[RMDB]
RNA sequence: GGGAACGACUCGAGUAGAGUCGAAAAGAUCCGCAAGGUGCAACAUCGACCAGUCUGGAUCAUUUAUGUGAAGGUACUGAGUAAGAGCAAGUAUGUUAGGACCCGAAAGAUGGUGAACUAUGCCUGGCUUAGCACAACAGUUCGCUGUUGUGCUAAGAAAAGAAACAACAACAACAAC
Reactivity to DMS in 0.01 (KOAc 150mM, MgCl2 10mM, bicine 150mM(pH8.5), 24C), signal-to-noise 3, nucleotides 027 to 126: g010a080u010c010c040g020c160a110a090g010g030u000g020c080a150a070c150a030u010c050g000a070c030c010a040g000u000c010u000g000g010a100u000c020a050u020u010u010a100u010g000u000g010a300a050g010g010u000a030c020u000g010a170g010u000a090a070g010a140g040c060a050a040g020u000a050u010g010u000u000a110g000g010a050c040c000c030g000a060a060a080g010a060u000g000g000u000g000a070a080c050u000a090u000g000c030c000u020g020g000
Reactivity to 2A3 in 0.01 (KOAc 150mM, MgCl2 10mM, bicine 150mM(pH8.5), 24C), signal-to-noise 2, nucleotides 027 to 126: g000a040u030c020c020g040c080a030a000g120g000u010g070c040a060a040c000a100u100c030g060a010c020c000a000g020u000c000u030g040g020a020u000c010a030u060u190u140a100u130g040u010g020a050a000g000g010u080a030c000u010g050a050g130u080a110a060g010a020g110c010a010a080g070u060a060u080g030u000u020a040g000g010a000c030c020c000g120a040a030a000g110a030u060g040g020u070g060a080a050c040u050a100u120g000c010c040u010g030g000